[RMDB]
RNA sequence: GGGAACGACUCGAGUAGAGUCGAAAAUUACGUAACUCACAUGUACCUGGACAAGUCGGGCUUUGACUGUCUGUACUUGAAGAUAAAAUCUUUAAAGAUGUGACUGAAUGGCAAUGAGAACAAAAGUGGAGUUACAGGUGGGCCACUAAUUCAGUGAGCAGUGCUACUAGUUCGCUAGUAGCACUGCAAAAGAAACAACAACAACAAC
Reactivity to 2A3 in 0.01 (KOAc 150mM, MgCl2 10mM, bicine 150mM(pH8.5), 24C), signal-to-noise 1, nucleotides 027 to 156: u130u080a070c070g080u040a100a120c000u040c030a010c000a090u030g030u080a050c000c060u110g030g030a030c010a190a000g060u040c030g020g000g110c060u030u090u140g030a040c020u050g000u090c000u080g040u100a040c020u050u100g120a020a020g000a000u080a100a040a020a060u010c080u060u120u190a080a110a000g050a020u030g000u070g140a040c000u010g080a000a000u030g070g000c080a000a080u140g030a080g000a130a000c030a060a000a020a000g020u030g000g010a070g020u010u030a030c020a080g000g000u070g000g060g000c080c000a000c000u130a160a080u170u170c030a020g120u080g100a030